[RMDB]
The record gives the reactivity of an RNA of 177 nucleotides to DMS and 2A3. Source: RMDB library OK1LIB, as collected in RNAgym. The RNA was probed in 150 mM KOAc, 10 mM MgCl2 and 150 mM bicine (pH 8.5) at 24 C. DMS adducts were read by reverse transcription with MarathonRT. For 2A3, 10,544 sequencing reads were counted.
RNA sequence: GGGAACGACUCGAGUAGAGUCGAAAAGAUCGAGAAUCCAUCGGAGGUAAAGGAAAUGCUGCACUUUGGAAUGUCCCGCUGUGGACAUGGAACUUUUCUUACUCCCGAGGACAUUGGGCAGCUUAAACGUAAUCAUGAUGUUCGCAUCAUGAUUACGAAAAGAAACAACAACAACAAC
Reactivity to DMS in 0.01 (KOAc 150mM, MgCl2 10mM, bicine 150mM(pH8.5), 24C), signal-to-noise 6, nucleotides 027 to 126: g000a110u020c050g000a110g010a100a190u010c010c020a080u010c040g000g000a060g000g010u000a030a040a080g010g000a040a040a030u030g010c060u000g010c050a080c080u000u020u020g010g010a080a030u000g000u000c000c010c020g020c180u030g020u040g000g000a000c010a010u000g010g000a090a120c100u000u000u000u020c040u000u000a080c060u000c020c010c010g000a090g010g020a070c120a130u000u000g010g000g020c080a040g000c030u000u010a050a060a190
Reactivity to 2A3 in 0.01 (KOAc 150mM, MgCl2 10mM, bicine 150mM(pH8.5), 24C), signal-to-noise 9, nucleotides 027 to 126: g050a060u160c090g020a020g070a110a080u010c010c020a170u030c030g050g030a080g060g030u140a080a070a090g080g050a030a050a040u180g050c060u060g010c060a090c140u100u120u140g070g100a130a010u010g000u000c020c020c010g210c300u270g150u300g020g000a000c000a010u010g020g020a030a040c010u030u020u070u030c020u020u020a060c030u040c010c010c010g020a050g010g020a020c030a060u050u070g020g010g030c010a030g010c000u050u100a090a110a010